RNA sequence: GGGAACGACUCGAGUAGAGUCGAAAAGUUGUUGAUGGAAGUGGGCGUAACUAAUGGCAUGAGCAUAAGAACCCGUGCAGCUAGAUUGGAUGUAAGUCGUAACAAGGUUGCGGUAGGUGAACCUGCCUAUGUAAGUACGCUUCGGCGUACUUACAUAAAAAGAAACAACAACAACAAC
Reactivity to DMS in 0.01 (KOAc 150mM, MgCl2 10mM, bicine 150mM(pH8.5), 24C), signal-to-noise 2, nucleotides 027 to 126: g000u000u000g000u000u000g030a060u000g010g000a100a080g010u020g000g030g090c100g030u010a060a070c100u010a080a080u000g000g040c040a090u000g000a080g000c040a020u000a080a120g020a160a190c080c010c030g020u000g020c000a070g010c100u000a100g000a110u040u000g000g010a050u030g020u020a050a070g010u010c010g010u020a070a180c100a030a140g000g010u000u000g010c130g000g030u000a010g000g000u000g010a070a040c060c010u000g000c030c040
The record gives the reactivity of an RNA of 177 nucleotides to DMS. The RNA was probed in 150 mM KOAc, 10 mM MgCl2 and 150 mM bicine (pH 8.5) at 24 C. Source: RMDB libraries RFM100 and RFMREP, as collected in RNAgym.